RNA sequence: GGGAACGACUCGAGUAGAGUCGAAAAGAACACGUCUCGGGACGACGCUAAACUCGCCCUGGUCGGGAUGGGUUUAACGACCCCUCGGGUUUCCUUGUUCCUAAAACUAGGUGGUGGAGUCAUAUAAAAAACUUCUACACGUUCGCGUGUAGAAGAAUCACAUCGUAUACUUCGGUAUACGAUGUGAAAAAGAAACAACAACAACAAC
Reactivity to DMS in 0.01 (KOAc 150mM, MgCl2 10mM, bicine 150mM(pH8.5), 24C), signal-to-noise 1, nucleotides 027 to 156: g020a050a080c020a080c030g020u000c020u000c040g020g000g000a050c040g030a180c000g020c060u000a060a090a090c180u000c000g050c000c000c000u010g020g020u000c150g040g000g000a080u000g000g010g010u010u000u000a120a130c040g000a070c010c000c010c020u000c000g020g010g030u010u000u000c030c030u010u000g010u000u000c010c000u000a060a050a100a100c110u000a050g000g020u000g010g030u000g020g000a170g000u000c030a080u000a110u040a000a040a040a060a060a050c000u000u000c010u000a020c000a010c000g050u010u000c300g070c000g100u000g000u000a010g000a020a000g000a100a100
Reactivity to 2A3 in 0.01 (KOAc 150mM, MgCl2 10mM, bicine 150mM(pH8.5), 24C), signal-to-noise 2, nucleotides 027 to 156: g050a040a030c050a000c070g020u000c020u050c030g020g060g040a080c230g010a010c020g040c190u070a060a030a000c010u000c010g020c000c000c000u060g090g100u140c060g040g000g000a050u060g030g030g020u000u020u070a090a040c000g010a010c020c000c020c000u000c000g000g010g020u030u060u030c030c000u030u050g000u000u020c000c030u060a040a060a050a050c060u080a070g000g040u030g010g010u040g020g080a020g050u050c050a030u060a000u300a160a070a030a020a030a050c000u000u000c000u000a000c000a000c010g040u040u050c230g030c010g030u000g000u000a000g000a000a000g000a000a010

Structure probing data (DMS and 2A3) for a 207-nucleotide construct.
Reactivities are given for positions 27 through 156.
Values are in units of 0.01, from 0 to 300, in steps of 10.
2A3 adducts were read by reverse transcription with SuperScript II with manganese.
The 2A3 profile rests on 1,662 reads.
DMS adducts were read by reverse transcription with MarathonRT.
DMS (dimethyl sulfate) methylates the pairing face of unpaired adenines and cytosines.